[RMDB]
RNA sequence: GGGAACGACUCGAGUAGAGUCGAAAAUGGAGAAGCAGGGCACGUGCAUUACUAACUCAUGCACACAGAGUGAGAGAGACAUUUCUUGCUGGAGUUAUGACUCUUACCUACUAUAGAUUGUGUUGGCGACGAGGAUUCGUUUCGACGAAUCCUCGUCAAAAGAAACAACAACAACAAC
Reactivity to 2A3 in 0.01 (KOAc 150mM, MgCl2 10mM, bicine 150mM(pH8.5), 24C), signal-to-noise 2, nucleotides 027 to 126: u150g010g020a090g020a140a000g000c040a000g010g050g000c020a010c070g030u060g000c040a030u040u100a040c050u060a000a150c000u030c060a000u060g030c060a020c000a000c020a010g100a030g080u110g000a030g000a000g000a000g010a000c000a040u090u140u000c030u120u170g100c110u060g040g040a020g000u020u050a080u090g050a080c000u010c000u080u090a030c020c000u050a080c000u100a090u040a260g220a280u010u040g010u010g000u000u010g000g000c040

This 177-nucleotide RNA was probed chemically with 2A3.
Reactivities are given for positions 27 through 126.
For 2A3 the reverse transcriptase was SuperScript II with manganese.
The RNA was probed in 150 mM KOAc, 10 mM MgCl2 and 150 mM bicine (pH 8.5) at 24 C.